[RMDB]
RNA sequence: GGGAACGACUCGAGUAGAGUCGAAAACUGGCGGACCGCUUGAGCUCAGGGGUUCUGGGCUGCAGUGGACUAUGCCGAUCGGGUGUCCGCACUAAGUUCGGUAUCGAUAUGGUGCUCCUGGGGGAGCCUUGGACUACCAGGUCGUCUAAGGAGGGGUGACAGAUUAAUGGUUCGCCAUUAAUCUGUCAAAAGAAACAACAACAACAAC
Reactivity to 2A3 in 0.01 (KOAc 150mM, MgCl2 10mM, bicine 150mM(pH8.5), 24C), signal-to-noise 2, nucleotides 027 to 156: c020u010g040g030c020g020g030a040c020c000g020c060u110u190g130a000g000c000u000c000a040g010g050g090g130u300u180c000u000g020g000g000c000u080g020c020a000g000u020g000g040a020c040u060a020u130g000c000c000g020a090u080c050g030g020g070u070g090u020c040c020g030c010a010c020u050a080a160g090u080u060c020g050g010u100a120u190c060g000a020u040a050u290g050g010u070g000c000u040c040c010u020g010g000g010g030g090a070g000c000c000u000u020g030g000a000c010u040a100c040c070a080g020g090u050c010g020u000c060u010a010a010g060g030a020g000g000g000g030u060